[RMDB]
RNA sequence: GGGAACGACUCGAGUAGAGUCGAAAAGUCACACCUGUUGAGGAUGAAGACGAGUGUGCUAGUGAGGUACAGUCCUCUGACGACUGCGAAGAACAGACUGAGCAGUUUGAUGAGAGCGAUGAUGACACAUGGUUAGGUGCCGAUGACACUGAAGCUGGCUGACAGAUCUAUUCGUAGAUCUGUCAGCAAAAGAAACAACAACAACAAC
Reactivity to 2A3 in 0.01 (KOAc 150mM, MgCl2 10mM, bicine 150mM(pH8.5), 24C), signal-to-noise 3, nucleotides 027 to 156: g050u040c010a020c010a010c070c020u060g050u070u080g030a060g040g000a040u060g020a060a040g010a020c070g010a060g040u070g010u020g000c000u020a010g060u020g070a020g020g070u110a070c010a010g100u070c010c010u000c030u020g020a030c040g000a000c000u000g000c040g020a030a010g030a090a080c150a090g240a160c010u010g000a000g000c010a000g000u010u050u080g020a010u010g010a010g010a030g040c040g020a050u050g000a030u060g010a010c010a000c030a190u060g010g060u030u050a060g030g000u000g020c020c000g050a060u060g010a020c020a010c090u050g020a050a020g030c040u020g060
Reactivity to DMS in 0.01 (KOAc 150mM, MgCl2 10mM, bicine 150mM(pH8.5), 24C), signal-to-noise 2, nucleotides 027 to 156: g000u000c050a160c040a110c050c010u000g000u000u000g000a130g020g070a140u000g000a110a240g000a000c040g000a110g040u030g010u000g000c000u000a030g050u010g010a070g010g000u000a050c040a170g000u000c000c000u000c020u010g010a300c300g000a080c010u000g020c050g000a240a060g000a040a210c120a160g010a100c030u000g010a300g010c060a080g030u000u000u000g000a170u010g000a040g000a010g000c040g010a090u000g020a100u000g020a050c050a080c080a090u020g050g080u000u000a210g020g010u000g010c070c010g000a060u000g020a160c030a020c030u000g000a090a080g000c060u000g020